[RMDB]
RNA sequence: GGGAACGACUCGAGUAGAGUCGAAAACAUUAAUUUAGAGACCUGAGCCUGAUAAAUUUACAUAUAAGCCAAACUGUAGAAGGUGGUUCUUGAAAAUGAGUCACACACACACACAAAAUGUGAGAAAAGAAGUCAAGAGGCCAGGUGCAGUGGCUCAUCACUAAUCAAUUUUCGAAUUGAUUAGUGAAAAAGAAACAACAACAACAAC
Reactivity to DMS in 0.01 (KOAc 150mM, MgCl2 10mM, bicine 150mM(pH8.5), 24C), signal-to-noise 2, nucleotides 027 to 156: c040a080u020u010a080a070u030u000u000a150g000a260g020a130c030c030u020g050a140g030c000c000u000g000a150u000a040a050a120u000u000u010a100c070a080u010a110u000a050a060g010c040c030a080a040a120c030u000g010u000a070g020a060a300g020g030u000g000g000u000u000c010u000u000g000a000a010a100a070u000g000a080g020u000c010a050c030a030c030a070c020a160c040a080c020a040c130a070a090a040a300u010g040u000g000a080g010a110a060a100a100g010a070a050g000u010c040a060a100g000a200g010g010c000c060a040g000g020u000g020c010a060g050u000g010g000c000u000c040a130
Reactivity to 2A3 in 0.01 (KOAc 150mM, MgCl2 10mM, bicine 150mM(pH8.5), 24C), signal-to-noise 3, nucleotides 027 to 156: c010a040u110u190a150a140u210u230u150a150g040a010g020a040c010c010u010g020a020g010c000c010u050g080a080u150a140a180a070u170u170u230a070c050a040u200a050u030a180a010g000c010c010a040a130a080c080u090g010u050a040g050a130a030g030g050u010g000g040u040u040c000u050u050g070a090a070a030a050u030g030a020g000u000c000a010c000a000c000a000c000a000c000a000c010a070c020a000a060a100a140u080g030u010g010a080g060a010a080a040a000g100a050a000g040u060c030a040a030g010a030g180g000c010c020a010g010g000u000g010c000a010g010u010g010g000c000u000c010a030